The record gives the reactivity of an RNA of 207 nucleotides to 2A3 and DMS.

RNA sequence: GGGAACGACUCGAGUAGAGUCGAAAAAUGGACAAAUCAUCAGGAAGGCCCUGUUGUUCGGCAGCUUAAAUUUCUCCCCAACACAGCCAUGUCUGACUGUCACUGUCACCACUCCUCAUGGGCUGCAGCAGUGUAUCCGUCUGCUAGGGCUGCCAUACCUGGUAUAGUACUUCGGUACUAUACCAGGAAAAGAAACAACAACAACAAC
Reactivity to 2A3 in 0.01 (KOAc 150mM, MgCl2 10mM, bicine 150mM(pH8.5), 24C), signal-to-noise 3, nucleotides 027 to 156: a000u070g030g010a030c050a010a100a030u150c080a020u040c090a080g060g030a130a030g100g010c020c020c020u040g010u020u010g020u000u100c060g000g010c000a000g000c030u150u180a090a140a100u200u230u080c140u130c000c020c000c000a050a040c080a030c010a040g020c010c010a060u050g060u040c040u020g020a010c010u020g070u060c070a010c100u060g020u100c010a000c100c000a020c060u070c010c010u060c070a050u160g120g000g000c060u050g020c040a010g020c000a000g000u020g030u120a050u030c020c020g010u000c030u010g000c000u000a020g100g000g000c010u000g010c000c000a010u050a060
Reactivity to DMS in 0.01 (KOAc 150mM, MgCl2 10mM, bicine 150mM(pH8.5), 24C), signal-to-noise 2, nucleotides 027 to 156: a070u000g010g000a130c060a060a110a140u000c060a150u000c040a130g000g040a140a140g010g020c030c010c000u010g000u000u000g010u000u010c020g030g030c010a050g000c020u000u000a020a040a120u010u000u000c070u010c010c010c000c070a100a120c140a070c030a060g000c000c020a140u000g030u000c030u000g010a040c010u000g010u000c050a050c040u010g000u000c020a060c070c050a060c040u000c020c020u000c120a100u000g010g000g030c040u040g010c110a060g010c010a050g000u010g030u020a140u000c040c080g030u030c030u010g000c040u020a150g030g020g000c010u000g000c010c010a040u000a130
DMS adducts were read by reverse transcription with MarathonRT. For DMS, 3,761 sequencing reads were counted.